[RMDB]
RNA sequence: GGGAACGACUCGAGUAGAGUCGAAAAUGAGGGGAACCUCGAUUGAGCAUAAUGCUACUGCAGUGGCAGGCUCCCAAGAGCUUUAGCUCACCUUUGACUAAAUGAAAUCGACUGCAAGCAUGGCAAACGUGUCUCGUCAAUUCGUUGACGAGACACGAAAAGAAACAACAACAACAAC
Reactivity to DMS in 0.01 (KOAc 150mM, MgCl2 10mM, bicine 150mM(pH8.5), 24C), signal-to-noise 1, nucleotides 027 to 126: u000g000a060g020g000g010g040a190a050c000c000u000c010g000a100u010u000g000a130g030c010a110u020a160a090u020g010c010u000a070c120u000g010c060a070g000u010g000g000c050a130g000g000c070u020c000c100c180a050a190g020a010g000c010u000u040u000a090g030c070u000c010a070c200c120u000u000u000g010a040c170u000a070a020a090u000g000a050a190a100u020c060g000a010c010u000g020c020a050a060g000c030a020u000g010g000c100a060a010a100
Reactivity to 2A3 in 0.01 (KOAc 150mM, MgCl2 10mM, bicine 150mM(pH8.5), 24C), signal-to-noise 1, nucleotides 027 to 126: u130g000a000g010g010g040g080a050a000c010c000u000c020g040a050u070u210g070a040g000c050a090u070a180a020u250g020c000u010a090c050u060g000c000a010g000u010g070g000c030a030g040g070c000u040c030c000c000a060a080g030a000g000c020u060u080u220a020g010c010u020c000a040c000c050u020u100u240g080a080c020u090a100a100a080u100g080a060a060a140u070c040g020a020c020u040g000c030a030a000g000c010a020u040g060g000c000a050a050a030